[RMDB]
An RNA of 177 nucleotides, treated with DMS and 2A3 and read out base by base. The data come from the RNA Mapping Database (RMDB), library OK1LIB. For 2A3 the reverse transcriptase was SuperScript II with manganese. For DMS, 1,802 sequencing reads were counted. Values are in units of 0.01, from 0 to 300, in steps of 10.
RNA sequence: GGGAACGACUCGAGUAGAGUCGAAAAUUCAAAACUCAUAGAAGUGUCGCGAUAGAACAGAAUUCCGCCGUGUCUCACUUUUAUAGUACUGAAGAAAGUUUCCGAUUCAGUCGAGAAUGAAACGGCGCCCUGAGCAUACUUUCGAGUAUGCUCAGGGAAAAGAAACAACAACAACAAC
Reactivity to DMS in 0.01 (KOAc 150mM, MgCl2 10mM, bicine 150mM(pH8.5), 24C), signal-to-noise 2, nucleotides 027 to 126: u000u010c020a100a140a120a060c040u030c190a100u000a040g040a020a060g000u010g000u000c060g000c020g000a060u000a040g000a030a060c060a120g050a090a300u000u010c050c000g010c010c030g000u000g000u030c210u000c000a020c070u000u010u010u000a000u020a020g010u020a040c260u010g010a050a000g000a090a070a110g000u030u000u000c020c010g040a030u000u010c000a030g000u020c000g010a080g000a020a150u110g020a080a030a060c030g000g040c030g000
Reactivity to 2A3 in 0.01 (KOAc 150mM, MgCl2 10mM, bicine 150mM(pH8.5), 24C), signal-to-noise 3, nucleotides 027 to 126: u040u020c010a000a030a070a090c020u010c060a040u000a050g030a040a000g030u010g010u030c040g000c020g080a010u040a080g060a120a020c050a070g230a130a080u090u030c020c030g020c040c000g070u010g070u040c020u030c130a010c020u040u070u000u020a080u040a020g040u060a030c030u010g030a020a020g080a110a100a050g070u040u100u010c010c040g040a100u040u050c030a010g030u080c040g040a020g100a170a190u160g030a100a120a010c010g020g000c000g000